[RMDB]
RNA sequence: GGGAACGACUCGAGUAGAGUCGAAAACUUAGUGAGUUCGCUCACUAAGGGACUGUGGAACCCAGGCUGGAGAGGGACCAAGUAGGAGGCUGGGCACCACCAACAUUCAGCGCUUCGGCGCUGAAAAAUUGACCUGACUAUUCGUAGUCAGGUCAAUAAAAGAAACAACAACAACAAC
Reactivity to 2A3 in 0.01 (KOAc 150mM, MgCl2 10mM, bicine 150mM(pH8.5), 24C), signal-to-noise 1, nucleotides 027 to 126: c010u000u010a010g000u000g000a010g000u070u100c150g060c090u000c010a000c000u000a000a000g000g020g010a020c060u070g010u010g070g040a050a050c000c010c020a010g080g010c030u050g000g060a100g020a110g070g000g050a020c010c020a130a040g060u030a070g100g160a020g070g000c020u010g040g010g020c010a060c000c000a020c020c010a020a060c030a060u030u040c000a000g000c020g040c000u000u060c150g100g020c020g010c020u000g000a010a000a000a020
Reactivity to DMS in 0.01 (KOAc 150mM, MgCl2 10mM, bicine 150mM(pH8.5), 24C), signal-to-noise 1, nucleotides 027 to 126: c010u000u010a020g010u030g000a030g000u010u000c230g040c000u010c010a020c000u020a000a010g000g000g000a110c150u010g030u000g000g000a130a090c080c010c000a030g030g000c020u010g000g000a110g010a080g000g000g000a200c110c040a070a090g000u000a060g030g010a100g000g000c010u010g020g010g010c140a110c030c010a000c040c160a090a080c100a150u000u000c020a000g010c000g030c010u010u010c240g010g020c000g010c000u000g000a000a010a040a090